An RNA of 207 nucleotides, treated with 2A3 and DMS and read out base by base. Reactivities are rounded to 0.1 and cut off at 0 and 3. Reactivities are given for positions 27 through 156. For 2A3, 749 sequencing reads were counted. DMS adducts were read by reverse transcription with MarathonRT. It was measured as part of the RMDB library OK3TST.

[RMDB]
RNA sequence: GGGAACGACUCGAGUAGAGUCGAAAAUUAUUCUGAUUUCCACAAGGAUACAGUCAGCAGGUUAGUAGAUAAACUGGAUGAUCAGACAAACAGUAGCUGUAUACUAAAACAUGAAUGGGUGAUGAGGAUAUUAGACUCACUGAGACUGACCAGUUCAUAUUAAUAAGACCUUCGGGUCUUAUUAAUAAAAAGAAACAACAACAACAAC
Reactivity to 2A3 in 0.01 (KOAc 150mM, MgCl2 10mM, bicine 150mM(pH8.5), 24C), signal-to-noise 2, nucleotides 027 to 156: u080u030a040u070u000c010u070g090a070u100u000u010c020c000a080c040a070a070g000g020a010u050a090c000a020g130u150c040a000g020c060a070g130g000u090u110a020g050u060a050g080a200u130a120a140a010c000u010g030g020a010u040g070a070u100c050a010g120a120c040a010a110a000c000a020g010u020a010g000c010u040g000u090a040u000a030c060u080a030a080a070a000c030a060u190g080a140a030u100g040g050g030u010g030a050u020g000a020g000g000a010u000a040u070u110a040g000a000c010u010c020a040c010u020g010a010g010a090c010u030g010a060c000c040a000g020u040u030c000a010
Reactivity to DMS in 0.01 (KOAc 150mM, MgCl2 10mM, bicine 150mM(pH8.5), 24C), signal-to-noise 3, nucleotides 027 to 156: u010u010a050u010u000c030u000g030a140u010u000u010c010c010a080c100a120a100g000g000a120u000a030c040a080g010u000c020a120g030c070a060g030g050u000u000a070g010u000a090g010a140u000a070a070a100c040u000g020g010a160u000g000a080u010c070a120g020a110c050a120a080a160c030a070g040u000a090g020c020u000g000u010a080u000a080c030u000a050a090a070a070c120a070u010g000a100a100u000g010g020g020u010g010a120u000g000a100g010g010a090u000a070u000u000a140g040a110c030u010c030a050c070u000g010a080g000a130c060u000g000a100c010c010a080g010u000u000c040a180